[RMDB]
RNA sequence: GGGAACGACUCGAGUAGAGUCGAAAAGAUAUGGACAUGUGACUUCGAUAAGCAGCAUUCGGAAACGAAUGGCUGCUUUUGACGAAGGCACAUGUCCUAAGUCAAAACAGUUGCUUCGGCAACUGAAUCACUCGCAAUUGUUCGCAAUUGCGAGUGAAAAAGAAACAACAACAACAAC
Reactivity to DMS in 0.01 (KOAc 150mM, MgCl2 10mM, bicine 150mM(pH8.5), 24C), signal-to-noise 1, nucleotides 027 to 126: g010a020u000a300u000g010g000a010c000a000u010g020u010g000a020c000u000u000c000g000a220u000a020a020g020c000a000g020c000a020u000u010c010g030g000a170a070a210c010g010a030a020u000g000g030c010u000g030c000u000u000u020u000g000a150c210g010a020a000g020g060c010a030c010a000u000g000u000c000c000u010a010a090g000u010c010a030a100a120a200c030a000g010u030u000g020c000u000u020c180g030g000c000a010a010c000u000g000a020a160
An RNA of 177 nucleotides, treated with DMS and read out base by base.
The RNA was probed in 150 mM KOAc, 10 mM MgCl2 and 150 mM bicine (pH 8.5) at 24 C.
The DMS profile rests on 920 reads.